[RMDB]
RNA sequence: GGGAACGACUCGAGUAGAGUCGAAAAACGCGUGAGGUACGCCUCACGCGAGAGGGUGUUGUAAGGUUGACUUGCUUAGAAGCUUGUUUAUUCUUCUAAGCUCUUCACUCUUAUAGACACCUUCAAAAUCAGUGAAGCACUUCGGUGCUUCACUGAUAAAAGAAACAACAACAACAAC
Reactivity to 2A3 in 0.01 (KOAc 150mM, MgCl2 10mM, bicine 150mM(pH8.5), 24C), signal-to-noise 1, nucleotides 027 to 126: a000c010g000c000g000u000g000a020g000g000u060a040c270g090c000c000u000c000a000c000g000c000g000a000g000a000g010g000g000u000g000u000u030g000u010a010a010g000g000u010u010g010a000c000u000u020g000c000u000u010a000g000a000a000g090c020u130u010g130u290u300u150a160u110u060c000u000u000c000u000a000a000g000c010u000c000u010u000c000a020c020u020c000u000u010a020u030a030g080a000c000a000c000c000u000u000c010a010a010a000
Overview: Source: RMDB library RFM100, as collected in RNAgym. An RNA of 177 nucleotides, treated with 2A3 and read out base by base. The reactions ran in a buffer of 150 mM KOAc, 10 mM MgCl2 and 150 mM bicine (pH 8.5), at 24 C. 2A3 is a SHAPE reagent: it acylates the 2'-hydroxyl of flexible nucleotides of all four kinds. Values cover nucleotides 27 to 126.